[RMDB]
RNA sequence: GGGAACGACUCGAGUAGAGUCGAAAAGAGAAAAUUAAAUUACUACAGUAGACAGAUACAGUAUUCAGAAUACGGUUGCUACAAACGUAUUUGAUGCUUUCGUACUAGUAAUCGUUCUUAUCUACUAAUUAAUACUCGGCUUCGGCCGAGUAUUAAUAAAAGAAACAACAACAACAAC
Reactivity to 2A3 in 0.01 (KOAc 150mM, MgCl2 10mM, bicine 150mM(pH8.5), 24C), signal-to-noise 2, nucleotides 027 to 126: g070a000g010a010a040a050a000u200u170a170a120a000u080u040a090c000u000a030c050a060g000u000a030g070a120c050a040g100a090u060a060c110a000g010u010a060u080u050c010a000g100a150a010u000a000c030g080g000u040u080g140c120u170a110c100a100a070a010c020g000u000a010u030u020u010g040a000u010g000c000u040u040u060c010g040u050a000c010u010a030g030u030a000a040u010c010g020u060u000c040u040u080a090u050c030u070a160c000u000a060
Reactivity to DMS in 0.01 (KOAc 150mM, MgCl2 10mM, bicine 150mM(pH8.5), 24C), signal-to-noise 1, nucleotides 027 to 126: g000a030g030a040a130a070a050u000u050a180a150a090u010u000a020c020u030a060c140a000g040u020a040g010a200c140a080g000a030u030a130c170a030g020u000a000u040u000c080a080g000a000a000u010a000c030g000g040u010u000g030c140u050a050c110a000a050a020c000g000u000a010u000u010u000g000a030u000g030c000u000u000u000c030g080u000a040c040u000a040g000u000a040a090u030c140g050u000u000c040u020u000a120u000c040u000a080c090u000a080
The data come from the RNA Mapping Database (RMDB), library OK1LIB. This 177-nucleotide RNA was probed chemically with 2A3 and DMS. 2A3 adducts were read by reverse transcription with SuperScript II with manganese. For DMS, 1,030 sequencing reads were counted. For DMS the reverse transcriptase was MarathonRT. Conditions: 150 mM KOAc, 10 mM MgCl2 and 150 mM bicine (pH 8.5), 24 C.